[RMDB]
RNA sequence: GGGAACGACUCGAGUAGAGUCGAAAAAGAUCCACGCUACGGCGUGGAUCGCACGUUCAUCCCUAUUGGGACGGAAGUAGGCAUAGUGCCGAAGGAACGCAUUAGUCAUGCGCUACGGCGCAUGACACACAUCAGAGUCACUUCGGUGACUCUGAAAGUUAUAGAUAGGCUUCGGCCUAUCUAUAACAAAAGAAACAACAACAACAAC
Reactivity to 2A3 in 0.01 (KOAc 150mM, MgCl2 10mM, bicine 150mM(pH8.5), 24C), signal-to-noise 3, nucleotides 027 to 156: a010g030a000u000c000c000a010c000g010c000u040a050c280g100g000c010g010u000g020g000a000u010c010g000c010a030c010g000u000u000c010a020u050c010c000c010u140a300u140u300g000g000g010a010c020g040g010a040a020g000u030a020g020g000c010a090u130a280g160u180g130c000c000g000a000a000g010g000a000a000c010g020c030a050u080u160a020g000u000c000a000u010g000c000g000c000u020a050c280g050g000c000g000c000a000u000g000a000c000a000c000a000c010a040u030c000a000g000a000g000u010c000a000c000u040u050c190g090g000u000g000a000c000u000c000u000g000a000a000a000
Reactivity to DMS in 0.01 (KOAc 150mM, MgCl2 10mM, bicine 150mM(pH8.5), 24C), signal-to-noise 1, nucleotides 027 to 156: a060g020a010u000c000c010a000c000g030c000u000a100c300g120g030c000g070u000g030g000a000u000c000g030c130a010c060g020u010u020c020a180u010c000c000c000u000a150u010u010g050g000g000a060c000g050g020a020a060g030u000a140g020g020c040a220u010a160g010u030g050c000c030g000a070a200g000g000a080a060c090g000c020a080u000u010a080g030u000c050a050u010g000c000g030c020u000a090c300g090g000c040g050c020a010u000g000a000c000a020c070a020c100a150u000c010a020g010a050g010u000c010a030c010u000u000c270g020g000u000g000a000c000u000c000u000g010a010a030a110

An RNA of 207 nucleotides, treated with 2A3 and DMS and read out base by base. The RNA was probed in 150 mM KOAc, 10 mM MgCl2 and 150 mM bicine (pH 8.5) at 24 C. Reactivities are given for positions 27 through 156. Source: RMDB library M2RFPK, as collected in RNAgym. For DMS the reverse transcriptase was MarathonRT. For DMS, 2,236 sequencing reads were counted. The 2A3 profile rests on 2,348 reads.